[RMDB]
RNA sequence: GGGAACGACUCGAGUAGAGUCGAAAAAACGCCGGUGGCGAAAGCGACACGCUGGGGCCUGUCUGACGCUGAGGCACGAAAGCCAGGGUAGCGAACGGGAUUAGAUACCCCGGUAGUCUUGGCUGUAGUCAAUGUGUAAGUUCGCUUACACAUUGACAAAAGAAACAACAACAACAAC
Reactivity to DMS in 0.01 (KOAc 150mM, MgCl2 10mM, bicine 150mM(pH8.5), 24C), signal-to-noise 2, nucleotides 027 to 126: a100a060c130g010c040c010g010g010u000g020g000c030g010a100a110a110g020c080g000a070c080a060c080g010c040u000g000g030g000g030c080c020u000g000u010c000u000g000a210c060g010c020u000g000a190g000g000c040a060c150g000a050a080a070g020c000c000a040g000g000g000u000a100g010c030g000a150a190c040g000g000g010a070u000u000a110g000a100u010a080c080c000c000c000g000g010u010a090g010u000c010u000u000g000g000c000u020g000u020a090
Reactivity to 2A3 in 0.01 (KOAc 150mM, MgCl2 10mM, bicine 150mM(pH8.5), 24C), signal-to-noise 1, nucleotides 027 to 126: a010a010c110g050c030c030g080g100u120g000g000c000g030a090a070a020g150c100g020a040c030a030c120g000c070u070g010g000g190g000c060c030u030g000u000c030u050g030a020c040g000c030u040g020a050g000g010c050a020c100g100a160a040a000g040c010c010a000g020g000g050u070a010g020c000g010a020a000c000g030g000g030a040u060u050a030g020a060u080a060c000c030c010c010g050g010u050a040g020u030c000u000u010g000g020c000u010g000u020a000
Record summary:
An RNA of 177 nucleotides, treated with DMS and 2A3 and read out base by base. The data come from the RNA Mapping Database (RMDB), library RFMREP. For 2A3, 1,281 sequencing reads were counted. Conditions: 150 mM KOAc, 10 mM MgCl2 and 150 mM bicine (pH 8.5), 24 C. 2A3 adducts were read by reverse transcription with SuperScript II with manganese. For DMS, 1,125 sequencing reads were counted.